[RMDB]
RNA sequence: GGGAACGACUCGAGUAGAGUCGAAAAUCUGGUCAAAUCUGAUAACGCGUGAGAGGUGAGUGGUUUUUAACCAGACGAUGUGUGUAAGCACAAGGAAGAGACACCCAAUAACAGGUCUGUGAUGCCCGACUACGUUCCGUUUCGACGGAACGUAGUCAAAAGAAACAACAACAACAAC
Reactivity to 2A3 in 0.01 (KOAc 150mM, MgCl2 10mM, bicine 150mM(pH8.5), 24C), signal-to-noise 2, nucleotides 027 to 126: u020c000u000g030g010u020c040a030a020a020u000c010u030g030a050u240a220a050c000g040c070g120u100g120a090g000a010g160g020u010g060a130g090u040g010g020u010u000u080u020u100a040a030c020c000a010g020a020c060g000a070u040g040u050g000u000g080u210a130a000g000c000a000c000a050a020g070g000a050a020g020a060g000a010c000a060c000c040c000a010a020u170a030a030c010a010g070g000u040c050u060g010u020g020a040u220g010c000c000c000
Reactivity to DMS in 0.01 (KOAc 150mM, MgCl2 10mM, bicine 150mM(pH8.5), 24C), signal-to-noise 1, nucleotides 027 to 126: u030c020u000g000g010u010c260a000a000a010u000c020u000g040a190u000a090a080c100g060c140g000u040g040a140g000a030g000g000u030g010a180g030u040g010g000u000u000u000u000u040a010a020c000c000a040g000a010c110g120a050u000g010u000g000u020g000u000a020a200g010c060a000c080a000a030g010g110a130a080g000a190g000a080c010a060c000c000c030a050a110u010a100a110c150a130g000g000u000c090u000g000u020g000a120u060g040c000c000c050
Chemical mapping of a 177-nucleotide RNA with 2A3 and DMS. Source: RMDB library RFM100, as collected in RNAgym.